[RMDB]
RNA sequence: GGGAACGACUCGAGUAGAGUCGAAAAUGCCAUUUUAGUUUUUGACGGAGAUUCGAAUGAACUUAAGUUUAUGAUGAAGGUAUGGCUGUUGAGAUUAUUUGGUCGGGAUUGUAGUUUGAAGAUGUGCCCUUUGUAUUUAGUUCGCUAAAUACAAAGGAAAAGAAACAACAACAACAAC
Reactivity to DMS in 0.01 (KOAc 150mM, MgCl2 10mM, bicine 150mM(pH8.5), 24C), signal-to-noise 7, nucleotides 027 to 126: u000g010c030c030a110u010u000u010u000a080g010u000u000u000u010u000g020a120c050g000g010a130g000a130u000u000c030g010a140a070u000g010a040a040c020u000u000a100a140g010u000u000u000a040u010g010a130u000g000a070a050g000g010u000a050u000g010g010c030u000g010u000u010g000a070g000a070u000u000a060u000u000u000g010g010u000c060g000g000g000a090u000u000g010u000a060g010u000u010u000g010a070a080g010a080u000g010u000g000c140
Reactivity to 2A3 in 0.01 (KOAc 150mM, MgCl2 10mM, bicine 150mM(pH8.5), 24C), signal-to-noise 3, nucleotides 027 to 126: u040g010c020c000a030u070u070u040u130a030g010u040u030u020u030u160g060a040c020g050g040a110g010a150u050u070c030g070a070a080u070g020a030a020c030u110u150a230a020g030u030u020u090a050u060g030a030u050g040a020a050g050g020u070a040u100g060g000c000u010g010u030u040g030a080g000a050u060u030a040u080u160u070g050g000u010c060g000g000g050a040u050u070g020u010a070g030u000u050u140g040a050a030g020a060u080g040u070g090c000